RNA sequence: GGGAACGACUCGAGUAGAGUCGAAAAUAGUUUUCCAGGCCAGGCAAAAGAUUAAGACACAUUUUUGAUCUUCCAUGUGGGAUUAGGCCUGAAUUAGCUCUAUUUGUUAAGGGACUUGAUUUCAUUGUGGAUCCACUUGCUGAGUGAGGAAAAAAUACUAUAUUAAUGCGUUCGCGCAUUAAUAUAGAAAAGAAACAACAACAACAAC
Reactivity to DMS in 0.01 (KOAc 150mM, MgCl2 10mM, bicine 150mM(pH8.5), 24C), signal-to-noise 2, nucleotides 027 to 156: u010a090g010u000u000u000u000c000c000a100g010g030c010c020a220g000g030c020a040a050a070a070g020a070u000u000a050a050g000a110c120a110c150a130u000u000u000u000u000g020a020u000c080u000u000c000c040a050u000g010u000g030g020g000a090u010u010a030g000g000c000c000u010g010a020a090u010u000a050g040c020u020c080u000a140u010u000u000g020u000u000a030a080g000g030g000a060c030u000u010g020a030u000u000u000c020a060u000u010g070u000g000g000a060u000c060c030a100c110u000u000g010c020u000g020a120g030u000g020a270g020g020a000a000a030a070a080a070u000a190
Reactivity to 2A3 in 0.01 (KOAc 150mM, MgCl2 10mM, bicine 150mM(pH8.5), 24C), signal-to-noise 3, nucleotides 027 to 156: u060a010g010u040u040u030u000c010c000a010g050g000c020c030a020g010g100c020a060a080a080a030g020a030u050u110a050a030g110a030c030a030c040a300u090u070u070u110u140g030a030u020c000u050u000c020c020a050u040g020u040g020g060g010a030u030u070a030g010g000c000c000u010g010a010a050u040u040a020g000c010u040c050u130a160u190u150u170g050u060u060a050a040g010g040g060a140c020u010u030g030a030u020u070u050c040a030u090u140g010u040g030g010a010u020c040c000a040c050u000u040g000c010u030g020a040g030u050g020a050g000g010a060a060a000a000a030a000u150a050